About this RNA: Chemical mapping of a 207-nucleotide RNA with 2A3 and DMS. For DMS, 2,564 sequencing reads were counted. The data come from the RNA Mapping Database (RMDB), library OK3TST. For 2A3 the reverse transcriptase was SuperScript II with manganese.

RNA sequence: GGGAACGACUCGAGUAGAGUCGAAAAUGUAUCAUUUGUGUCCCUAACAGCCUACUUUCUAAAUGCUGGUUCUGAAUGUGGAAUAGCUAAGGAUGCAUACUACUAGUUACCUUGGAGAAUGCACAUUUCCAUUAUUGCUGUGAAUGUGGGGGCCAAACCCAUGCUAUCCUUUCGAGGAUAGCAUGGGAAAAGAAACAACAACAACAAC
Reactivity to 2A3 in 0.01 (KOAc 150mM, MgCl2 10mM, bicine 150mM(pH8.5), 24C), signal-to-noise 4, nucleotides 027 to 156: u160g010u060a110u160c080a090u060u010u030g150u030g010u060c000c000c020u010a050a010c000a040g000c030c040u110a160c030u140u190u090c080u140a080a130a090u130g010c030u040g030g040u030u100c060u070g080a100a070u090g030u070g030g040a130a020u030a060g080c130u090a040a040g090g020a070u100g060c000a040u070a080c010u020a020c020u010a060g090u140u100a150c020c020u010u030g020g030a060g030a090a050u060g060c010a010c000a080u060u020u040c020c010a020u080u140a080u170u170g040c050u010g020u060g120a040a050u180g050u150g050g010g010g000g020c000c030a000a050a010
Reactivity to DMS in 0.01 (KOAc 150mM, MgCl2 10mM, bicine 150mM(pH8.5), 24C), signal-to-noise 1, nucleotides 027 to 156: u020g020u000a050u010c060a110u000u000u000g030u000g000u000c000c020c000u000a030a060c040a080g000c050c020u000a150c050u000u000u000c030u010a050a160a080u010g010c080u010g020g050u000u010c050u010g020a120a090u000g030u010g010g010a070a050u000a090g070c050u010a110a060g020g000a070u010g030c030a110u010a090c050u000a050c030u000a080g010u020u000a080c080c070u000u000g000g050a160g000a090a100u000g000c120a120c030a090u000u010u000c050c030a110u010u000a030u000u000g030c010u020g000u000g000a030a110u020g010u000g070g020g000g020g060c020c030a000a040a210